[RMDB]
RNA sequence: GGGAACGACUCGAGUAGAGUCGAAAAGAAUCACCGUAUCUAUUUAGGUUUACGCUCCAAGAUCGGUGGAUAGCAGCCCUAUCAAUAUCUAGGAGAACUGUGCUAUGUUUAGAAGAUUAGGUAGUCUAUUACACAGCCAUGUUCGCAUGGCUGUGAACACGUGUAGACUGUUCGCAGUCUACACGUGAAAAGAAACAACAACAACAAC
Reactivity to DMS in 0.01 (KOAc 150mM, MgCl2 10mM, bicine 150mM(pH8.5), 24C), signal-to-noise 2, nucleotides 027 to 156: g000a180a110u010c010a140c030c010g020u000a100u020c010u000a160u000u000u000a090g000g000u000u000u010a160c080g000c060u000c020c040a150a080g030a030u010c030g000g010u000g040g010a060u000a080g000c030a190g000c090c110c030u000a140u000c020a100a100u000a060u000c070u010a100g000g010a090g000a070a060c070u020g030u000g000c030u000a070u020g030u000u000u000a140g010a100a090g020a100u000u000a070g020g020u010a060g000u000c060u000a080u000u000a190c000a010c010a030g000c000c000a020u000g000u000u010c260g040c000a040u000g030g000c000u000g010u000g000a040a100
Reactivity to 2A3 in 0.01 (KOAc 150mM, MgCl2 10mM, bicine 150mM(pH8.5), 24C), signal-to-noise 3, nucleotides 027 to 156: g080a040a050u080c020a000c000c020g030u140a070u000c020u020a130u110u220u120a050g000g050u040u040u090a090c110g010c040u030c010c010a050a000g000a020u030c010g000g030u030g000g090a020u040a040g040c040a010g000c010c000c020u030a030u140c040a070a110u040a060u230c030u030a040g000g080a080g010a120a120c060u020g050u040g110c010u050a040u160g050u050u130u030a080g020a240a020g020a130u150u100a040g020g080u020a020g060u020c030u020a100u070u100a110c000a000c000a010g000c000c000a010u020g010u010u030c080g000c070a000u000g000g000c000u010g000u000g000a000a000